[RMDB]
RNA sequence: GGGAACGACUCGAGUAGAGUCGAAAACUCAACAGUCAGUUUAUAAUUUGGCUCUGCGGCUGACUGAAUCGCCUCAAUCCCAGGUUGAUAAAGUGUAUCCUCAUGCUGGAUAUCAUAAUAAUGUAUCAUACACUCAUCGCCAGCAAGCCUGAUAGCCUGAGGCAUAAAAUUUCGAUUUUAUGCCUCAAAAAGAAACAACAACAACAAC
Reactivity to 2A3 in 0.01 (KOAc 150mM, MgCl2 10mM, bicine 150mM(pH8.5), 24C), signal-to-noise 6, nucleotides 027 to 156: c040u040c040a030a020c000a020g020u010c000a000g000u010u050u080a260u100a180a220u160u100u150g010g000c010u030c070u080g030c040g010g000c000u010g010a010c000u000g020a020a070u080c050g020c020c000u060c030a040a090u060c000c010c010a010g040g000u070u200g070a030u080a060a110a020g020u040g010u030a020u060c010c040u080c090a090u160g050c080u070g030g020a020u040a040u130c050a010u050a190a060u130a090a050u120g050u050a040u080c040a020u010a090c020a020c020u070c030a050u090c040g030c030c000a020g020c010a020a000g010c000c010u080g070a080u200a070g030c020c050
Reactivity to DMS in 0.01 (KOAc 150mM, MgCl2 10mM, bicine 150mM(pH8.5), 24C), signal-to-noise 2, nucleotides 027 to 156: c080u000c020a110a270c020a030g000u000c000a020g020u000u010u010a100u010a080a180u000u030u000g030g010c010u000c020u010g050c110g000g020c020u000g000a030c010u010g010a100a150u010c040g100c060c010u000c050a070a200u010c020c010c020a190g020g010u010u000g030a080u060a060a080a100g040u000g020u000a020u000c010c030u020c110a100u010g040c050u010g050g000a150u000a080u010c120a080u010a100a080u000a060a130u010g010u010a060u000c060a080u020a050c040a020c010u000c060a080u000c020g010c070c010a130g050c050a040a090g000c000c040u000g000a140u000a090g020c050c110
Background: Chemical mapping of a 207-nucleotide RNA with 2A3 and DMS. For 2A3, 3,703 sequencing reads were counted. The reactions ran in a buffer of 150 mM KOAc, 10 mM MgCl2 and 150 mM bicine (pH 8.5), at 24 C. For DMS, 4,269 sequencing reads were counted. DMS adducts were read by reverse transcription with MarathonRT.